The record gives the reactivity of an RNA of 177 nucleotides to DMS. The RNA was probed in 150 mM KOAc, 10 mM MgCl2 and 150 mM bicine (pH 8.5) at 24 C. The DMS profile rests on 1,628 reads.

[RMDB]
RNA sequence: GGGAACGACUCGAGUAGAGUCGAAAAAAUUCGGAAGCGAAUCGUUCCGCUUUUUCCGCGUUGGAGUCUGAAACUGCCUGAAGGGCGCCGAGACUCUUCAGGGUACGAAUGUGAUUGCCGCCCCAAACGACUCCAUAUCAUUCGUGAUAUGGAGUCGAAAAGAAACAACAACAACAAC
Reactivity to DMS in 0.01 (KOAc 150mM, MgCl2 10mM, bicine 150mM(pH8.5), 24C), signal-to-noise 2, nucleotides 027 to 126: a020a040u010u000c010g010g010a040a060g020c050g000a050a100u010c080g020u010u000c040c010g020c170u000u010u000u000u010c020c060g050c150g010u010u000g010g010a070g010u020c020u000g020a060a070a090c110u010g020c010c010u010g000a050a050g010g010g020c050g000c060c110g010a110g010a150c010u000c010u000u010c000a010g000g010g010u000a040c080g010a040a080u000g010u010g010a120u000u000g020c020c040g000c030c000c000c050a050a060a150

It was measured as part of the RMDB library OK2TST.